RNA sequence: GGGAACGACUCGAGUAGAGUCGAAAAGAUAUGGACGCUGGUGCGAGCUUGGACCUACGAUCGGAAACGAUCGUAGCUAGCUCACACCUGGCGUCCUAAGUCAAAAGAUCCUACUUCGGUAGGAUCAGGAAGUCUAUUUGUUCGCAAAUAGACUUCCAAAAGAAACAACAACAACAAC
Reactivity to DMS in 0.01 (KOAc 150mM, MgCl2 10mM, bicine 150mM(pH8.5), 24C), signal-to-noise 3, nucleotides 027 to 126: g000a050u000a300u000g000g000a010c010g020c010u000g010g050u000g010c030g000a010g010c010u030u000g040g010a120c300c010u000a000c000g000a000u000c010g020g010a100a130a170c000g010a000u000c000g000u010a010g010c030u000a010g020c000u000c000a020c010a000c000c000u010g000g000c010g000u010c010c000u000a020a090g010u020c020a130a110a150a170g010a030u000c000c000u000a000c000u000u000c190g050g000u000a010g000g010a000u000c000a040
Reactivity to 2A3 in 0.01 (KOAc 150mM, MgCl2 10mM, bicine 150mM(pH8.5), 24C), signal-to-noise 1, nucleotides 027 to 126: g030a030u080a040u190g000g000a010c000g020c020u020g020g000u010g000c030g000a000g000c020u140u250g070g090a180c020c000u000a000c000g000a010u000c010g030g000a040a090a060c010g000a000u000c010g010u020a000g030c000u000a000g020c010u000c000a020c000a000c020c000u000g020g000c020g010u010c000c000u000a010a010g000u000c010a000a030a010a130g000a000u000c000c000u000a000c000u030u030c100g080g000u000a000g020g000a020u010c010a000